The record gives the reactivity of an RNA of 177 nucleotides to DMS and 2A3. For DMS, 1,206 sequencing reads were counted. The 2A3 profile rests on 1,207 reads. Source: RMDB library OK2TRN, as collected in RNAgym.

[RMDB]
RNA sequence: GGGAACGACUCGAGUAGAGUCGAAAAAAGAGAAUCUGACAGAUACCAUAAAGGGAUUUGACCUAAUCACUAAUUUUCAGGUGGUGGCUGAUGCUUUGAACAUCUCUUUGCUGCCCAAUCCAUUAGCAUUCCUACUGGAGUUCGCUCCAGUAGGAAUAAAAGAAACAACAACAACAAC
Reactivity to DMS in 0.01 (KOAc 150mM, MgCl2 10mM, bicine 150mM(pH8.5), 24C), signal-to-noise 2, nucleotides 027 to 126: a000a030g000a040g010a020a070u000c060u000g000a130c050a050g000a120u030a030c040c050a090u010a050a130a060g000g010g000a080u010u000u000g000a070c070c030u000a080a080u010c020a010c030u030a080a110u010u000u020u000c180a130g020g020u000g000g030u000g010g000c030u020g020a200u000g000c020u000u000u010g030a050a110c150a100u000c000u000c050u000u000u010g000c170u000g000c030c000c020a080a150u030c100c100a080u010u000a110g040c200
Reactivity to 2A3 in 0.01 (KOAc 150mM, MgCl2 10mM, bicine 150mM(pH8.5), 24C), signal-to-noise 2, nucleotides 027 to 126: a000a000g100a020g010a040a030u050c020u050g010a010c000a040g020a010u040a040c040c010a040u130a060a120a020g040g000g000a050u080u040u100g110a090c010c020u060a070a050u080c040a020c100u110a140a180u070u130u240u230c090a050g110g040u030g000g040u000g050g000c020u040g000a120u060g040c010u110u090u030g010a010a010c010a220u000c000u030c000u000u050u040g080c110u100g010c040c040c000a000a040u050c030c010a050u100u150a020g080c000
Background
Conditions: 150 mM KOAc, 10 mM MgCl2 and 150 mM bicine (pH 8.5), 24 C.